Source: RMDB library RFMREP, as collected in RNAgym. An RNA of 177 nucleotides, treated with DMS and read out base by base. DMS adducts were read by reverse transcription with MarathonRT. Values are in units of 0.01, from 0 to 300, in steps of 10.

[RMDB]
RNA sequence: GGGAACGACUCGAGUAGAGUCGAAAAAGAGAGGCUGUUGGACAGUGGAGGGAGGGAGUCCCAGGGCAGCUCCCAGAGGCCCUGAGACACUGUGGUUCUGAUUUCCUAGGACCCGCUGGCCCAGAAAUCAUACUGUAGGGUUCGCCCUACAGUAUGAAAAAGAAACAACAACAACAAC
Reactivity to DMS in 0.01 (KOAc 150mM, MgCl2 10mM, bicine 150mM(pH8.5), 24C), signal-to-noise 1, nucleotides 027 to 126: a060g010a170g010a090g000g000c030u010g030u010u010g000g000a120c050a060g000u010g010g000a130g000g000g000a190g020g000g010a140g010u000c010c010c030a020g000g020g030c020a100g010c080u010c020c050c030a170g010a120g010g000c020c010c030u000g000a030g020a070c010a100c140u000g030u000g020g020u020u000c000u000g010a060u000u010u010c090c080u010a100g010g000a050c040c000c060g010c120u000g000g000c020c040c040a180g000a040a100a090